[RMDB]
RNA sequence: GGGAACGACUCGAGUAGAGUCGAAAAGCAUCCGGCGGCCGCGACAUCGUUUCGGCCACGGCGAGGUCGCCAACAGUUCGAUCGUGCGGUUCAGACAAGGGCCAACUCCGGUUUCGACGAGCCCGGACAUUGAGCGAAUGUUCGCAUUCGCUCAAUGAAAAGAAACAACAACAACAAC
Reactivity to 2A3 in 0.01 (KOAc 150mM, MgCl2 10mM, bicine 150mM(pH8.5), 24C), signal-to-noise 4, nucleotides 027 to 126: g070c020a070u040c020c010g020g000c020g000g010c020c020g030c020g050a030c010a170u110c070g030u030u060u060c070g030g000c010c010a010c030g000g000c010g010a030g040g000u030c000g020c020c000a050a060c020a070g100u120u090c050g020a100u030c040g000u060g050c010g000g040u050u080c030a020g030a150c060a060a150g060g000g000c020c020a060a090c020u010c020c020g040g030u030u060u090c110g050a130c030g040a020g010c000c020c000g010g000a010
Reactivity to DMS in 0.01 (KOAc 150mM, MgCl2 10mM, bicine 150mM(pH8.5), 24C), signal-to-noise 3, nucleotides 027 to 126: g000c080a090u010c020c000g010g010c050g020g010c020c050g000c070g020a040c060a110u020c100g000u000u000u000c120g020g010c040c040a030c060g000g000c030g010a050g000g020u020c030g050c070c050a090a150c140a070g000u020u000c020g000a040u010c040g000u020g000c070g000g000u010u020c040a050g010a140c200a090a100g010g000g000c050c030a070a140c090u000c010c040g000g010u000u000u000c050g020a080c120g020a130g010c070c000c020g010g020a130

This 177-nucleotide RNA was probed chemically with 2A3 and DMS. It was measured as part of the RMDB library OK1LIB. For 2A3 the reverse transcriptase was SuperScript II with manganese. DMS adducts were read by reverse transcription with MarathonRT. For 2A3, 4,777 sequencing reads were counted. Conditions: 150 mM KOAc, 10 mM MgCl2 and 150 mM bicine (pH 8.5), 24 C.